The data come from the RNA Mapping Database (RMDB), library OK3TST. An RNA of 207 nucleotides, treated with 2A3 and DMS and read out base by base. The 2A3 profile rests on 2,825 reads.

RNA sequence: GGGAACGACUCGAGUAGAGUCGAAAAGCUAAAGCCGCUAAUGUGGCUUGCAUUUGGUCUGUGGAUGCUUUUAACCAGCUAUCUGCUGACUUACAGCAUAGGCUGCGAAAAGCAUGUUCAAAAACUGGCUUGAAGAUUAAGCUUACUUAUAAUAAGCUAUCAAGCAUUAAUUCGUUAAUGCUUGAUAAAAAGAAACAACAACAACAAC
Reactivity to 2A3 in 0.01 (KOAc 150mM, MgCl2 10mM, bicine 150mM(pH8.5), 24C), signal-to-noise 4, nucleotides 027 to 156: g010c010u070a120a000a010g020c010c020g040c120u180a300a100u290g010u030g040g030c000u010u020g010c000a050u030u050u210g020g010u020c030u030g040u060g070g030a000u010g000c000u050u020u030u060a050a060c040c010a000g010c020u040a100u110c020u050g000c000u020g040a160c030u100u160a090c010a000g000c000a010u020a080g070g000c000u030g040c080g050a010a010a010a010g000c000a000u030g060u060u060c080a050a040a020a030a050c010u000g030g010c030u050u080g040a040a010g040a140u110u140a030a000g000c000u000u020a010c000u040u060a030u010a160a050u030a030a000g000c000
Reactivity to DMS in 0.01 (KOAc 150mM, MgCl2 10mM, bicine 150mM(pH8.5), 24C), signal-to-noise 3, nucleotides 027 to 156: g010c050u000a020a020a070g020c020c010g050c010u000a080a110u010g040u000g010g020c020u000u000g010c050a150u000u000u010g010g010u000c020u000g010u020g020g000a040u000g010c000u000u000u000u000a060a120c080c020a030g040c010u000a110u000c070u000g010c010u010g010a120c120u010u010a100c020a020g020c000a130u000a140g010g020c000u000g010c050g010a050a050a010a030g020c010a010u010g010u000u010c050a070a050a050a050a040c040u000g010g010c020u000u000g010a060a110g010a140u000u000a060a080g010c000u000u000a020c020u000u000a120u000a050a070u010a020a040g010c020
Reactivities are given for positions 27 through 156.